[RMDB]
RNA sequence: GGGAACGACUCGAGUAGAGUCGAAAACGACCACCUGACGGGUCGGACAUAGCGUCAGGAUCAUCCGUGUCAGUCACCACGGUAAUCAUGUGCCUGAUGAUGGUUUUCCAUCUUAAUCUGACUGAGUCGUAGCAGUCUACAGUACUAUGACAUUAGAGAUUAGGUCCUCGUUCGCGAGGACCUAAUCAAAAGAAACAACAACAACAAC
Reactivity to 2A3 in 0.01 (KOAc 150mM, MgCl2 10mM, bicine 150mM(pH8.5), 24C), signal-to-noise 1, nucleotides 027 to 156: c000g010a010c000c000a020c020c010u000g000a000c000g000g000g000u020c020g170g020a170c200a070u250a080g060c000g000u000c000a000g000g000a000u230c020a000u000c000c000g020u020g000u010c020a000g050u000c000a010c000c000a000c000g000g120u000a000a040u100c020a040u070g020u000g050c000c000u030g030a000u020g000a000u000g000g070u160u150u150u000c070c000a040u010c000u010u080a170a050u040c130u240g000a000c000u000g000a000g000u000c020g040u000a000g000c000a000g030u000c070u130a090c040a020g100u070a000c000u000a000u000g000a000c020a060u020u200a070g090a000